[RMDB]
RNA sequence: GGGAACGACUCGAGUAGAGUCGAAAAUUUGCAUUGGUACUUUGAAUGUGUUAAUCAAAUUACGUCUACCUUCCUUCAACGCCAAUUCGCACAUUUAGCACCGAGUGAGAGUUCGUAAUUUGUACUCAUGACCAUUACUGUUCGCAGUAAUGGUCAUAAAAGAAACAACAACAACAAC
Reactivity to DMS in 0.01 (KOAc 150mM, MgCl2 10mM, bicine 150mM(pH8.5), 24C), signal-to-noise 4, nucleotides 027 to 126: u010u020u020g010c130a030u010u000g000g020u020a030c050u010u030u010g000a070a050u010g020u000g030u010u000a050a060u010c060a030a030a050u010u020a080c080g000u000c050u000a060c070c030u000u010c020c010u000u020c090a050a100c100g000c030c040a040a060u010u010c060g000c020a010c070a050u000u000u000a110g010c050a090c080c060g020a080g000u000g010a100g010a060g000u010u000c070g000u020a040a080u010u000u010g020u010a060c050u010c080
Reactivity to 2A3 in 0.01 (KOAc 150mM, MgCl2 10mM, bicine 150mM(pH8.5), 24C), signal-to-noise 7, nucleotides 027 to 126: u040u030u070g030c040a020u020u040g030g010u100a080c060u150u080u160g140a110a060u150g060u030g020u100u160a040a050u060c040a000a010a100u080u060a050c040g040u000c020u040a080c000c020u040u070c010c000u030u080c040a070a030c050g020c010c010a050a080u080u080c070g020c040a020c000a050u040u060u080a030g000c040a040c060c040g030a010g040u100g050a080g000a010g020u030u060c020g010u030a090a190u070u070u110g040u030a040c020u010c050